[RMDB]
RNA sequence: GGGAACGACUCGAGUAGAGUCGAAAAGUGAGUGUCAGUCAGUCACUGAGUCAGACACAGACUCUGUCUCACAGUGACUCAGAGUGUCACACACUGAGACACAGACACAGUCAGACAGUGACUCUCACUAGUCAAGACGCUUCGGCGUCUUGACUAGAAAAGAAACAACAACAACAAC
Reactivity to DMS in 0.01 (KOAc 150mM, MgCl2 10mM, bicine 150mM(pH8.5), 24C), signal-to-noise 2, nucleotides 027 to 126: g000u000g000a060g010u000g000u000c010a120g020u000c070a090g000u000c000a030c030u000g000a140g040u010c020a130g070a070c070a060c160a150g000a100c070u000c070u000g020u020c030u000c000a070c140a080g000u000g000a030c000u000c080a030g000a150g020u010g000u010c070a070c070a060c090a150c090u000g000a030g000a080c000a020c110a070g000a070c030a010c080a060g030u010c080a160g000a060c020a060g010u000g000a070c020u000c000u000c020a100
Reactivity to 2A3 in 0.01 (KOAc 150mM, MgCl2 10mM, bicine 150mM(pH8.5), 24C), signal-to-noise 1, nucleotides 027 to 126: g030u040g000a020g000u090g050u040c050a060g080u000c040a020g020u010c010a000c040u020g010a040g030u020c030a090g070a020c030a030c050a170g070a140c000u000c030u050g030u010c000u080c010a080c040a020g000u010g000a000c020u000c050a110g050a050g110u070g070u050c000a020c000a000c010a010c130u020g020a000g030a040c030a000c000a040g010a050c030a000c030a120g110u070c030a020g020a050c010a080g090u010g050a040c000u020c000u010c000a050